The record gives the reactivity of an RNA of 177 nucleotides to 2A3 and DMS. Reactivities are given for positions 27 through 126.
[RMDB]
RNA sequence: GGGAACGACUCGAGUAGAGUCGAAAAGAUAUGGAGCCUGUAGGGAGCUGACACUCGGAAACGAGUGCCAGCGAAGAACUACGGCUCCUAAGUCAAAGAGUCUCGGAUGUUCGCAUCCGAGACUCAACAUACCAGAGGUGUUCGCACCUCUGGUAUGAAAAGAAACAACAACAACAAC
Reactivity to 2A3 in 0.01 (KOAc 150mM, MgCl2 10mM, bicine 150mM(pH8.5), 24C), signal-to-noise 1, nucleotides 027 to 126: g000a010u020a000u060g010g020a000g000c030c070u070g130u010a040g020g010g020a060g030c000u020g020a000c010a000c000u000c000g010g030a010a010a000c010g000a000g000u000g010c000c010a000g000c020g030a070a030g000a010a000c010u010a010c020g000g000c010u000c000c000u000a000a000g000u000c010a080a050a140g010a010g000u020c010u020c000g030g000a030u030g080u210u200c300g030c210a000u010c000c000g000a000g000a000c000u010c000a000a000
Reactivity to DMS in 0.01 (KOAc 150mM, MgCl2 10mM, bicine 150mM(pH8.5), 24C), signal-to-noise 2, nucleotides 027 to 126: g000a020u000a040u010g000g000a010g000c000c000u010g020u000a000g040g000g000a050g020c000u010g000a020c000a010c000u000c000g000g000a010a030a060c000g000a010g000u000g010c000c000a000g010c000g050a090a100g000a220a300c000u010a010c000g000g020c000u000c010c000u010a000a060g000u010c010a130a170a210g010a030g000u000c010u010c000g000g000a020u010g020u010u010c300g020c010a000u000c000c000g010a000g000a000c000u000c000a030a110
2A3 adducts were read by reverse transcription with SuperScript II with manganese. For 2A3, 3,376 sequencing reads were counted.